Chemical mapping of a 177-nucleotide RNA with 2A3 and DMS. For 2A3 the reverse transcriptase was SuperScript II with manganese. The data come from the RNA Mapping Database (RMDB), library OK2TRN. The 2A3 profile rests on 1,092 reads. Reactivities are given for positions 27 through 126. The RNA was probed in 150 mM KOAc, 10 mM MgCl2 and 150 mM bicine (pH 8.5) at 24 C.
RNA sequence: GGGAACGACUCGAGUAGAGUCGAAAAAGGGGUCCUCCCGCGAACUGCGUCGCAACGGCCAGAUUCCUGCAGUCAUCUAUGGCGACAAGCAGGAGCCCCUCGCAAUCGCCGUCUCCUACAAGGAGAACGGCACCAUCCGAUUCGUCGGAUGGUGCCGAAAAGAAACAACAACAACAAC
Reactivity to 2A3 in 0.01 (KOAc 150mM, MgCl2 10mM, bicine 150mM(pH8.5), 24C), signal-to-noise 1, nucleotides 027 to 126: a000g000g000g000g000u070c000c020u030c020c020c000g000c010g070a070a040c040u070g040c070g060u030c010g080c080a100a120c080g030g060c010c040a040g010a080u120u030c030c000u000g020c050a060g070u000c000a110u050c100u210a170u260g170g000c040g000a040c050a080a030g000c010a010g000g000a020g030c000c000c000c020u020c010g000c040a040a150u080c050g040c040c020g000u050c000u000c000c000u130a230c130a140a060g000g000a010g040a060a020
Reactivity to DMS in 0.01 (KOAc 150mM, MgCl2 10mM, bicine 150mM(pH8.5), 24C), signal-to-noise 1, nucleotides 027 to 126: a040g000g000g040g000u010c160c080u000c010c020c040g000c070g010a100a120c110u010g010c090g000u000c030g000c070a160a080c100g000g000c020c120a100g000a210u030u000c020c050u020g040c010a090g000u020c010a050u000c130u020a070u050g000g000c050g000a040c030a110a090g000c010a030g000g000a030g000c030c010c010c000u010c110g020c160a080a070u000c060g000c020c050g000u000c010u000c000c030u000a050c270a140a300g010g000a010g000a020a090